Structure probing data (DMS and 2A3) for a 177-nucleotide construct. DMS adducts were read by reverse transcription with MarathonRT. For 2A3, 637 sequencing reads were counted.
RNA sequence: GGGAACGACUCGAGUAGAGUCGAAAAUUUUGUUUGACUAACAAUCUCGGUUUUUUAACCCAUCUAAAUUAUCUAGCUGAAGAUAGCUGUUUGAAGACACUGGCAAGAAAAUGGAAAACAUCGAUUGGUACUGUUGAGUUUUCGAACUCAACAGUACAAAAGAAACAACAACAACAAC
Reactivity to DMS in 0.01 (KOAc 150mM, MgCl2 10mM, bicine 150mM(pH8.5), 24C), signal-to-noise 2, nucleotides 027 to 126: u010u020u030u010g020u020u000u010g050a090c020u020a100a170c070a090a100u020c020u000c070g000g010u000u000u010u000u010u010a100a210c020c020c000a100u000c110u010a050a070a070u000u000a040u010c050u000a050g020c060u000g000a060a110g000a100u000a040g060c020u010g000u000u000u000g000a090a090g020a030c050a030c030u010g040g010c040a070a030g010a060a060a030a030u000g000g010a080a030a090a080c120a030u000c040g000a190u010u000g040
Reactivity to 2A3 in 0.01 (KOAc 150mM, MgCl2 10mM, bicine 150mM(pH8.5), 24C), signal-to-noise 1, nucleotides 027 to 126: u030u060u010u150g020u000u080u010g060a050c040u040a130a030c000a080a030u040c050u020c000g000g090u040u190u000u000u000u170a170a130c000c000c000a000u020c040u150a070a100a170u190u070a060u120c040u010a010g000c030u050g040a070a020g050a200u100a050g020c070u060g080u000u150u160g130a060a020g020a000c000a000c040u010g090g010c000a000a060g100a180a040a010a000u070g070g020a120a050a030a030c000a040u070c040g100a180u000u060g110